[RMDB]
RNA sequence: GGGAACGACUCGAGUAGAGUCGAAAACGGGGGCGCGCUGGUGAACAUGAACGCUCAACUCGUCGGAGUCAACUCGGCCAUUGCCACGCUGGGCGCGGACUCAGCCGAUGCGCAGAGCGGCUCGAUCAGUACUAUGACCAUUCGUGGUCAUAGUACUAAAAGAAACAACAACAACAAC
Reactivity to DMS in 0.01 (KOAc 150mM, MgCl2 10mM, bicine 150mM(pH8.5), 24C), signal-to-noise 6, nucleotides 027 to 126: c080g010g010g020g000g020c160g010c140g010c050u010g010g010u010g010a070a100c080a100u010g000a080a100c090g010c010u000c030a120a090c070u000c010g040u000c060g020g000a040g010u010c020a120a110c050u010c020g010g000c020c020a060u000u000g010c170c120a120c180g010c010u000g010g000g020c040g040c200g020g000a120c040u010c040a070g020c020c040g020a030u000g000c170g010c060a080g000a020g020c160g000g000c040u000c030g000a090u000c120
Reactivity to 2A3 in 0.01 (KOAc 150mM, MgCl2 10mM, bicine 150mM(pH8.5), 24C), signal-to-noise 3, nucleotides 027 to 126: c020g010g000g000g010g000c010g000c020g000c020u070g020g090u110g110a070a020c020a070u140g040a090a030c030g010c010u040c070a030a070c030u040c030g060u010c070g090g020a000g030u030c020a050a110c050u000c020g010g000c020c010a060u030u080g060c050c030a130c060g010c020u030g000g040g000c170g000c140g250g050a130c010u010c020a010g010c030c020g030a040u040g010c070g000c060a010g000a010g020c000g000g000c040u050c020g060a140u090c030
Structure probing data (DMS and 2A3) for a 177-nucleotide construct. For 2A3, 6,543 sequencing reads were counted. High DMS reactivity at an A or C suggests that its Watson-Crick edge is free. It was measured as part of the RMDB library OK2TRN. For DMS, 5,650 sequencing reads were counted.